[RMDB]
RNA sequence: GGGAACGACUCGAGUAGAGUCGAAAACCUCUUCGAUGGUAGUGGGAAUCCCGUCGAUCUCUACCUCGACAACUUUGGCGAUCGAGAUAUAGUUGCUGUAGAGAGGCUCGGGGACAAGGAGGCGAUCAUACAACCCGUCAUUCGUGACGGGUUGUAUAAAAGAAACAACAACAACAAC
Reactivity to 2A3 in 0.01 (KOAc 150mM, MgCl2 10mM, bicine 150mM(pH8.5), 24C), signal-to-noise 1, nucleotides 027 to 126: c000c000u000c030u120u020c010g060a080u090g060g020u020a020g080u120g050g000g100a040a070u090c000c010c000g030u040c020g070a170u030c020u020c000u010a020c040c000u030c070g040a040c010a090a050c040u100u110u290g050g010c060g060a060u100c040g080a130g110a120u060a030u040a150g060u000u030g030c070u040g000u020a000g020a010g030a030g070g000c010u000c030g020g010g000g050a010c020a080a040g030g010a030g010g000c040g030a040u110c010
Reactivity to DMS in 0.01 (KOAc 150mM, MgCl2 10mM, bicine 150mM(pH8.5), 24C), signal-to-noise 2, nucleotides 027 to 126: c020c010u030c090u000u000c100g020a110u000g000g000u000a040g010u000g020g020g000a120a110u010c010c030c000g000u000c090g020a100u000c000u010c000u000a050c030c130u000c000g000a190c110a030a100c050u000u000u020g030g010c120g000a080u000c100g030a090g000a120u020a080u000a070g010u000u020g010c050u010g010u000a070g000a060g000a040g030g000c090u000c030g020g010g030g010a090c070a070a090g000g010a090g010g000c030g000a050u010c170